The record gives the reactivity of an RNA of 207 nucleotides to 2A3 and DMS. The RNA was probed in 150 mM KOAc, 10 mM MgCl2 and 150 mM bicine (pH 8.5) at 24 C. It was measured as part of the RMDB library M2RFPK. For DMS, 3,781 sequencing reads were counted.

RNA sequence: GGGAACGACUCGAGUAGAGUCGAAAAAGUCACCUAUUACGAUAGGUGACAUUUGAACCAGCGAACACUUCAGUUGCGAGAUUCGAGGUUUCAGUCUGAAUCAUAGUAGCCAUUACGAUGGCUACAACUCACUCCCGACUGUUCGCAGUCGGGAGAACUAAAAUAAGACGUUCGCGUCUUAUUUUAGAAAAGAAACAACAACAACAAC
Reactivity to 2A3 in 0.01 (KOAc 150mM, MgCl2 10mM, bicine 150mM(pH8.5), 24C), signal-to-noise 5, nucleotides 027 to 156: a000g010u000c000a000c000c010u000a010u020u080a080c250g040a010u000a010g000g000u010g000a000c000a000u050u040u130g060a010a010c000c000a010g130c000g000a000a010c030a010c080u030u000c000a010g000u010u010g000c000g010a000g000a000u000u000c000g000a040g030g030u100u260u300c040a020g110u050c010u010g000a010a020u110c080a050u060a130g000u000a000g010c000c000a000u010u070a060c250g110a030u010g000g000c000u000a000c000a000a010c000u080c030a050c000u000c000c000c000g000a000c000u010g050u070u090c230g010c150a000g000u000c000g010g000g000a000g000a000a000
Reactivity to DMS in 0.01 (KOAc 150mM, MgCl2 10mM, bicine 150mM(pH8.5), 24C), signal-to-noise 2, nucleotides 027 to 156: a150g020u000c000a000c000c000u000a020u000u000a140c240g030a090u000a000g000g010u000g010a000c000a010u000u010u010g000a110a170c040c030a140g050c050g030a090a050c070a140c140u000u010c030a120g010u000u010g020c020g010a110g000a100u000u000c000g000a270g000g000u000u010u000c040a110g010u000c020u010g020a050a060u010c040a120u000a170g010u010a030g010c000c000a000u010u000a180c210g010a130u000g020g000c000u000a000c010a040a030c110u010c030a120c000u000c000c000c000g000a050c000u000g000u020u000c300g040c070a000g010u000c000g000g000g000a000g000a000a080